The record gives the reactivity of an RNA of 207 nucleotides to 2A3. Conditions: 150 mM KOAc, 10 mM MgCl2 and 150 mM bicine (pH 8.5), 24 C. The data come from the RNA Mapping Database (RMDB), library M2RFPK.
RNA sequence: GGGAACGACUCGAGUAGAGUCGAAAAGGUGAAAGCGAAUCGGGGAAGAUAAGCUAGCACCAAAAAGGAACCGAUUCCCACCAAGUUCGGAAAGAGAUACCGGGCGAGGCGCUGAAGAAAGAAUCUCAAACUCCCGCAAGUUUCGACUUGCGGGAAACCAGACUACGUGAUUCGUCACGUAGUCUGGAAAAGAAACAACAACAACAAC
Reactivity to 2A3 in 0.01 (KOAc 150mM, MgCl2 10mM, bicine 150mM(pH8.5), 24C), signal-to-noise 1, nucleotides 027 to 156: g000g000u010g070a140a030a000g080c070g000a000a070u020c020g010g000g090g050a070a090g080a100u080a130a040g010c030u030a040g010c010a020c000c000a100a000a070a030a060g080g030a050a020c030c060g030a100u000u010c010c000c000a010c010c010a060a000g010u030u030c050g010g040a180a070a050g030a010g010a000u080a080c000c010g000g030g000c030g030a020g050g000c080g000c090u100g040a050a030g040a070a140a020g100a050a040u000c010u000c050a090a020a070c030u000c020c000c040g000c000a000a000g010u010u050u190c120g140a030c030u000u000g010c040g020g020g010a000a000a000